[RMDB]
RNA sequence: GGGAACGACUCGAGUAGAGUCGAAAAUCUGGACAUGCGGCCCUUUGCUUCCGACUCGGGAACGAAGACACGAGAGCCAUCGAUGUCCGUCAGAGGAACACAGCCCGCAGGGUGAAAGAAACACAUAUAAAUGGGUACAUUUCGAUGUACCCAUUUAAAAAGAAACAACAACAACAAC
Reactivity to DMS in 0.01 (KOAc 150mM, MgCl2 10mM, bicine 150mM(pH8.5), 24C), signal-to-noise 7, nucleotides 027 to 126: u000c040u000g000g010a040c020a050u000g010c200g010g010c030c040c010u000u000u000g010c060u000u000c030c020g010a270c110u010c170g010g010g000a080a150c130g000a050a020g000a080c080a050c170g020a070g010a110g010c020c020a080u010c090g010a040u000g000u000c010c040g010u010c140a050g010a110g000g000a090a100c100a070c130a140g010c070c010c020g010c080a050g010g010g010u000g000a040a070a050g000a090a060a040c070a050c140a080u000a100

The data come from the RNA Mapping Database (RMDB), library OK2TRN. The record gives the reactivity of an RNA of 177 nucleotides to DMS. The reactions ran in a buffer of 150 mM KOAc, 10 mM MgCl2 and 150 mM bicine (pH 8.5), at 24 C.